[RMDB]
RNA sequence: GGGAACGACUCGAGUAGAGUCGAAAAUAUCAAGGGUCUAUUGUAUACAAAACAUACUUGAGUAGAUUGUUUAAACAGCAUUCUGUUAAUAUCCUCACUAAAGUUGGGAAGUAUUUCAAAGAUGUUAGAGAUACGGUACAUUCGUGUACCGUAUCUCAAAAGAAACAACAACAACAAC
Reactivity to 2A3 in 0.01 (KOAc 150mM, MgCl2 10mM, bicine 150mM(pH8.5), 24C), signal-to-noise 2, nucleotides 027 to 126: u300a060u100c010a010a030g060g010g130u000c050u140a170u060u100g050u040a050u020a070c040a000a230a050a000c000a000u080a020c000u000u040g020a010g010u080a000g000a120u060u030g110u080u050u070a050a090a010c020a000g020c030a080u130u150c010u020g000u060u020a030a020u060a090u030c000c050u070c030a000c020u160a130a000a090g080u090u050g000g030g020a000a070g060u030a080u030u070u060c060a030a080a000g050a000u040g080u120u080a020
Reactivity to DMS in 0.01 (KOAc 150mM, MgCl2 10mM, bicine 150mM(pH8.5), 24C), signal-to-noise 2, nucleotides 027 to 126: u030a120u020c040a020a050g000g000g020u020c100u020a080u010u000g010u020a020u000a070c200a080a070a170a090c030a010u040a020c020u000u000g000a010g000u020a090g000a010u000u020g000u030u010u010a020a040a040c200a030g000c230a040u030u000c020u000g000u020u030a090a070u010a040u000c000c020u020c130a000c090u040a060a050a110g020u000u000g000g000g010a070a130g040u000a060u020u000u000c060a010a070a090g000a040u040g030u000u000a070
An RNA of 177 nucleotides, treated with 2A3 and DMS and read out base by base. For 2A3 the reverse transcriptase was SuperScript II with manganese. The reactions ran in a buffer of 150 mM KOAc, 10 mM MgCl2 and 150 mM bicine (pH 8.5), at 24 C.